[RMDB]
RNA sequence: GGGAACGACUCGAGUAGAGUCGAAAAUAAGUCGGGUAAUAACAAGUACAGAUUUGCAGGUGCAAUUAUGGCUGGAGUUGCCCUCGGUGUUGCAACAGCAGCCACUGUUACAGCAGGGAUAGCUCUAUGCCUGACCAGUAUUCGUACUGGUCAGGCAAAAAGAAACAACAACAACAAC
Reactivity to DMS in 0.01 (KOAc 150mM, MgCl2 10mM, bicine 150mM(pH8.5), 24C), signal-to-noise 1, nucleotides 027 to 126: u010a180a030g040u000c080g000g020g020u000a050a090u000a070a160c130a050a070g050u000a110c060a030g020a080u010u000u000g000c050a080g020g000u010g000c040a060a020u040u000a070u020g020g000c040u000g020g010a080g040u000u010g020c010c050c030u030c150g000g020u010g040u000u000g000c040a000a020c050a030g010c000a070g020c090c080a050c090u000g000u000u000a020c090a050g000c050a070g000g010g000a050u000a060g000c020u010c080u010a180

The record gives the reactivity of an RNA of 177 nucleotides to DMS. DMS adducts were read by reverse transcription with MarathonRT. It was measured as part of the RMDB library OK2TST. The reactions ran in a buffer of 150 mM KOAc, 10 mM MgCl2 and 150 mM bicine (pH 8.5), at 24 C.